[RMDB]
RNA sequence: GGGAACGACUCGAGUAGAGUCGAAAAGAGGGCGAAAGUGGGUAUAAGUGAGGUGCUAGACCCCCAAAAAGUCCCCUCUAAAGGGACACAUCUAAGGACUAUUAUAGUCUAUGAUGAACGACACCAAAUGUGGAUAUGCAUUCGUGCAUAUCCACAUAAAAGAAACAACAACAACAAC
Reactivity to DMS in 0.01 (KOAc 150mM, MgCl2 10mM, bicine 150mM(pH8.5), 24C), signal-to-noise 5, nucleotides 027 to 126: g010a040g000g010g000c120g000a080a080a060g020u000g020g010g020u000a040u030a040a080g010u010g000a090g030g020u010g020c030u010a090g020a090c020c060c000c040c100a020a060a060a100a140g010u010c020c000c000c000u000c140u030a030a110a100g000g010g000a040c050a180c030a010u000c000u010a080a210g010g000a000c010u000a120u040u050a160u010a000g010u000c000u000a300u030g000a000u000g000a150a080c120g010a090c140a120c120c140a070a070
Reactivity to 2A3 in 0.01 (KOAc 150mM, MgCl2 10mM, bicine 150mM(pH8.5), 24C), signal-to-noise 4, nucleotides 027 to 126: g070a000g020g020g000c130g030a110a050a020g040u100g060g030g050u050a110u060a140a080g040u080g110a060g030g050u070g060c020u030a030g010a090c010c010c000c010c040a080a060a040a040a000g010u020c020c000c020c010u060c050u080a080a060a000g030g000g000a000c010a000c010a040u000c000u010a050a090g020g000a000c010u010a000u300u050a150u230a070g000u020c000u000a030u060g000a000u020g030a070a010c040g050a010c030a020c070c040a040a180
This 177-nucleotide RNA was probed chemically with DMS and 2A3. Values are in units of 0.01, from 0 to 300, in steps of 10. High DMS reactivity at an A or C suggests that its Watson-Crick edge is free. The reactions ran in a buffer of 150 mM KOAc, 10 mM MgCl2 and 150 mM bicine (pH 8.5), at 24 C. Reactivities are given for positions 27 through 126. It was measured as part of the RMDB libraries RFM100 and RFMREP.